[RMDB]
RNA sequence: GGGAACGACUCGAGUAGAGUCGAAAAAGAAUAGUUUUCGAACUAUUCUCACGACGACCUUGGGAAACCCUGAGGCGCGAUCCCACGCGAUCGUCUGUUCGAACACCUGGUUGUUCGCAACCAGGAACUAUUUAGCCUGUUUCGACAGGCUAAAUAGAAAAGAAACAACAACAACAAC
Reactivity to DMS in 0.01 (KOAc 150mM, MgCl2 10mM, bicine 150mM(pH8.5), 24C), signal-to-noise 3, nucleotides 027 to 126: a030g010a020a010u000a000g010u000u000u020u020c190g030a040a020c000u010a000u000u000c000u000c170a140c120g020a050c010g020a200c020c000u000u000g000g000g010a120a150a170c220c000c030u010g020a050g010g020c090g010c030g000a110u010c000c000c000a230c030g000c050g010a080u010c020g010u010c030u000g040u000u000c110g010a080a100c300a130c010c000u000g000g010u000u000g000u010u020c210g020c000a000a010c010c010a000g000g020a020a100
Reactivity to 2A3 in 0.01 (KOAc 150mM, MgCl2 10mM, bicine 150mM(pH8.5), 24C), signal-to-noise 3, nucleotides 027 to 126: a020g010a000a000u040a020g000u040u050u040u150c220g020a020a000c000u010a020u050u000c010u020c030a070c030g050a020c000g090a090c020c000u050u010g060g000g060a250a300a230c060c000c000u010g020a030g030g020c020g000c010g030a050u010c000c000c020a030c020g040c050g070a160u100c010g040u020c080u130g220u120u120c060g080a140a060c060a070c060c000u040g000g040u010u010g020u060u070c240g030c060a000a000c000c000a010g000g000a000a000
Notes
The data come from the RNA Mapping Database (RMDB), library M2PK50. An RNA of 177 nucleotides, treated with DMS and 2A3 and read out base by base. DMS adducts were read by reverse transcription with MarathonRT. The RNA was probed in 150 mM KOAc, 10 mM MgCl2 and 150 mM bicine (pH 8.5) at 24 C.